[RMDB]
RNA sequence: GGGAACGACUCGAGUAGAGUCGAAAAGAUAUGGAGCUGACGACGAGCAACAGCAAAAGGUACGUGGCAUCGGAAACGAUGCGUAACAUCGUACCUUUUGACAUGCUUAAAUGUCAGCUCCUAAGUCCAUAAGCUAGAAGUUCGCUUCUAGCUUAUGAAAAGAAACAACAACAACAAC
Reactivity to DMS in 0.01 (KOAc 150mM, MgCl2 10mM, bicine 150mM(pH8.5), 24C), signal-to-noise 9, nucleotides 027 to 126: g010a100u000a300u000g000g010a010g020c000u000g000a010c010g020a290c300g000a010g010c000a030a100c300a200g010c020a010a010a000a000g000g010u000a000c000g030u000g010g010c000a010u010c000g010g000a110a090a170c000g000a010u010g010c010g000u000a020a070c180a020u010c010g000u000a000c000c000u000u000u000u000g010a040c100a240u000g010c000u000u000a050a140a160u010g010u000c010a010g010c000u000c000c000u000a010a080g000u010c040
Reactivity to 2A3 in 0.01 (KOAc 150mM, MgCl2 10mM, bicine 150mM(pH8.5), 24C), signal-to-noise 4, nucleotides 027 to 126: g070a020u130a060u230g000g010a010g020c010u010g010a010c010g000a010c150g010a010g000c020a020a200c060a200g110c020a000a000a000a000g000g020u010a000c000g010u010g050g000c010a010u010c000g030g010a030a070a040c020g010a010u010g000c010g000u020a030a000c020a270u270c010g000u000a000c000c000u000u000u010u000g000a000c010a010u020g000c010u020u050a010a030a040u300g000u000c000a000g010c000u000c000c000u000a000a000g000u000c000